An RNA of 177 nucleotides, treated with 2A3 and read out base by base. The data come from the RNA Mapping Database (RMDB), library OK1LIB.
[RMDB]
RNA sequence: GGGAACGACUCGAGUAGAGUCGAAAACUACACACUGACCUGUCCCCAGUGUUUCCAGGUAAUGACUUGGCACUCCAGAGAAAGUUUCAUGCUGUUGCGUGUGGUGGCUCCAAGCCAAGCACCUGGCACGCGCUUACGCAUUCGUGCGUAAGCGCGUAAAAGAAACAACAACAACAAC
Reactivity to 2A3 in 0.01 (KOAc 150mM, MgCl2 10mM, bicine 150mM(pH8.5), 24C), signal-to-noise 1, nucleotides 027 to 126: c060u170a080c030a000c000a010c000u060g020a020c000c060u030g000u000c000c010c000c000a000g000u000g010u050u110u000c000c000a000g080g000u040a000a030u060g070a110c000u010u020g000g000c000a010c010u070c000c070a060g050a030g070a080a100a170g060u000u170u200c010a010u020g000c020u040g090u300u090g020c020g010u150g030u030g000g070u000g000g000c050u000c020c040a060a000g030c000c000a060a000g040c000a060c000c000u000g000g040c010